[RMDB]
RNA sequence: GGGAACGACUCGAGUAGAGUCGAAAAGAUAUGGAAAGGCACAACAGCGUCACAUCGGAAACGAUGUCGACGACAUGUGCCUUCCUAAGUCAAAAGUUUUAAAUGGCCUUCGGGCCAUUUAAAACAACGAAAAUAACACGUUCGCGUGUUAUUUUCGAAAAGAAACAACAACAACAAC
Reactivity to DMS in 0.01 (KOAc 150mM, MgCl2 10mM, bicine 150mM(pH8.5), 24C), signal-to-noise 3, nucleotides 027 to 126: g000a010u000a240u010g000g020a040a010a060g000g020c000a000c000a020a080c250a180g000c020g010u000c010a000c000a000u000c000g000g000a080a060a140c000g010a020u000g000u010c170g020a010c000g010a040c070a100u000g000u000g000c020c000u000u000c000c000u000a030a180g010u000c030a110a070a100a150g010u000u000u000u010a000a020a010u000g000g000c000c010u000u020c270g040g010g010c000c000a000u000u000u000a000a000a000a000c020a080a110
Reactivity to 2A3 in 0.01 (KOAc 150mM, MgCl2 10mM, bicine 150mM(pH8.5), 24C), signal-to-noise 2, nucleotides 027 to 126: g010a000u020a020u090g010g020a100a180a150g040g050c000a000c020a020a150c090a200g090c020g000u020c000a000c000a010u000c000g030g000a030a030a000c000g000a010u020g020u060c130g000a000c000g070a050c000a020u000g000u010g000c000c000u000u020c000c000u000a000a010g000u010c040a140a000a080a110g000u030u000u000u020a030a010a000u000g020g010c010c020u020u040c300g090g000g000c000c000a000u000u000u000a000a000a000a000c010a010a000